[RMDB]
RNA sequence: GGGAACGACUCGAGUAGAGUCGAAAAGUACGGGCGCCAUCCGAAACGUACGUACUCUCUCCAUCCGAAACGUACGUGGUUCGGGCAUGCGAAAGGAUGGAUGUGUACGAAUCGAAGCGAUAUAUGAACUCCACGGCACUACCUUCCUUGUAGGAUAACAUGAUCCAAAGUUCGCUUUGGAUCAUGUAAAAGAAACAACAACAACAAC
Reactivity to 2A3 in 0.01 (KOAc 150mM, MgCl2 10mM, bicine 150mM(pH8.5), 24C), signal-to-noise 5, nucleotides 027 to 156: g060u050a030c030g010g050g000c020g010c020c030a070u070c000c010g020a080a050a000c030g020u060a000c000g000u070a070c010u020c020u010c020u000c100c020a090u060c040c020g060a080a090a060c030g020u070a020c040g010u100g020g120u100u080c050g010g030g000c030a030u100g030c020g070a120a030a000g010g000a000u010g010g010a040u030g020u010g000u030a130c020g040a060a100u130c060g020a070a010g060c050g050a020u020a010u010a030u240g070a080a050c030u010c040c020a030c040g010g000c020a020c020u090a100c010c000u030u030c000c000u060u090g100u140a040g040g010a020u080a100
Reactivity to DMS in 0.01 (KOAc 150mM, MgCl2 10mM, bicine 150mM(pH8.5), 24C), signal-to-noise 3, nucleotides 027 to 156: g000u000a050c050g020g020g040c020g000c020c020a090u010c130c060g010a060a070a070c010g010u020a000c000g020u000a030c080u000c040u010c060u020c050c050a070u000c030c030g040a050a070a080c020g000u000a040c040g060u000g020g020u000u000c090g030g000g000c110a080u000g000c080g040a100a140a130g020g000a050u010g010g000a120u000g020u000g030u000a070c040g010a080a120u000c050g020a050a050g000c020g000a160u000a170u000a160u010g000a120a030c040u000c010c030a090c050g000g020c030a040c030u000a230c030c010u000u000c010c010u010u000g010u010a170g000g000a110u000a120

Annotation: Chemical mapping of a 207-nucleotide RNA with 2A3 and DMS. Values cover nucleotides 27 to 156. 2A3 adducts were read by reverse transcription with SuperScript II with manganese. For DMS the reverse transcriptase was MarathonRT.